[RMDB]
RNA sequence: GGGAACGACUCGAGUAGAGUCGAAAAGUAGACCUUGUCUGACUAGGCUAAUGGUCAGGCAGGGGGGACAGUGUAUGCAAGAGUAAUUUGGAGUUCAUGCCAGCUCUAGCCAGCUUAAUCAGUGGCUGUUAAACUUCUCUUUCGAGAGAAGUUUAACAAAAGAAACAACAACAACAAC
Reactivity to 2A3 in 0.01 (KOAc 150mM, MgCl2 10mM, bicine 150mM(pH8.5), 24C), signal-to-noise 7, nucleotides 027 to 126: g130u100a030g020a060c010c000u000u000g010u000c000u000g000a000c010u020a030g060g280c040u100a140a120u190g020g000u000c000a000g000g000c000a000g000g000g000g000g000g010a010c030a090g070u030g050u190a090u140g020c040a070a030g030a020g090u110a080a170u130u090u130g050g000a020g050u090u070c040a040u160g030c010c030a010g000c000u020c010u030a010g010c000c010a030g020c030u080u120a100a050u180c020a050g040u030g050g000c000u010
Reactivity to DMS in 0.01 (KOAc 150mM, MgCl2 10mM, bicine 150mM(pH8.5), 24C), signal-to-noise 5, nucleotides 027 to 126: g020u010a060g010a120c000c010u000u000g020u000c010u000g000a010c000u000a050g020g040c220u040a090a120u010g000g010u000c000a010g000g000c010a020g010g000g000g000g010g000a060c060a080g010u000g010u000a060u010g000c120a080a080g010a070g010u010a050a060u010u020u010g010g010a070g000u000u020c100a080u030g010c060c060a060g010c010u000c030u000a040g020c010c020a050g000c040u000u010a100a070u030c240a050g010u000g000g000c020u010